[RMDB]
RNA sequence: GGGAACGACUCGAGUAGAGUCGAAAAUACCGCAGGCCUGCGGUGCGGCAGUGUGGAGACCUGCCGUAAGCCGUGUUGUUUGGACAACCGGGAGAAAGCGUAUGCGGAGGCAGCGCUUUCAGGGUCUAAAAGUAUGGGAUCUUCGGAUCCCAUACAAGUUUGUACAAGGGUUCGCCCUUGUACAAACAAAAGAAACAACAACAACAAC
Reactivity to 2A3 in 0.01 (KOAc 150mM, MgCl2 10mM, bicine 150mM(pH8.5), 24C), signal-to-noise 2, nucleotides 027 to 156: u100a010c000c000g000c000a000g000g000c010c040u070g030c020g010g040u000g000c000g000g000c000a000g010u070g000u090g300g070a070g030a090c000c000u020g000c000c000g000u010a000a000g020c000c010g090u090g030u140u010g050u050u110u260g110g050a020c000a000a000c000c000g000g000g000a020g000a000a000a000g000c000g000u040a300u220g000c010g030g090a050g300g050c000a000g010c000g020c020u000u000u010c000a000g000g000g000u020c000u000a050a080a040a040g000u010a010u010g000g000g000a000u000c000u020u000c100g100g000a000u010c030c000c000a000u000a000c000a000a000
Conditions: 150 mM KOAc, 10 mM MgCl2 and 150 mM bicine (pH 8.5), 24 C. This 207-nucleotide RNA was probed chemically with 2A3. For 2A3 the reverse transcriptase was SuperScript II with manganese.